[RMDB]
RNA sequence: GGGAACGACUCGAGUAGAGUCGAAAACGGCAAAAGGACCCGCAUGCAGAGCGGCAAGGGUGACGCCGGAAUGGCAUGCGACGACAUGGAUGCCGGGGUAUCGCCGCGACCGAUCGUAGACCGGCACGCUAAUGGGAGCGUUCGCGCUCCCAUUAGCAAAAGAAACAACAACAACAAC
Reactivity to DMS in 0.01 (KOAc 150mM, MgCl2 10mM, bicine 150mM(pH8.5), 24C), signal-to-noise 2, nucleotides 027 to 126: c050g000g050c050a100a100a060a220g000g020a300c300c000c000g030c040a030u010g030c020a050g020a180g000c000g000g080c040a070a110g010g000g020u020g000a060c160g000c010c000g000g000a040a070u160g020g000c050a000u000g000c010g020a060c100g030a170c080a060u030g020g000a190u010g000c000c010g000g000g000g020u000a010u000c070g020c000c040g000c060g080a080c010c030g000a030u020c060g000u000a110g000a140c010c000g000g020c060a050c300
Reactivity to 2A3 in 0.01 (KOAc 150mM, MgCl2 10mM, bicine 150mM(pH8.5), 24C), signal-to-noise 3, nucleotides 027 to 126: c000g030g010c040a020a020a050a110g180g030a120c020c010c000g030c000a000u030g010c000a010g060a060g300c030g010g010c020a080a140g150g020g070u140g060a030c100g000c000c020g010g010a060a070u110g090g010c000a000u030g020c000g000a050c010g010a030c030a080u140g110g000a070u050g020c020c000g000g010g010g010u140a050u100c020g040c040c000g000c020g030a050c010c030g050a100u120c090g040u020a030g050a040c000c000g000g010c030a010c070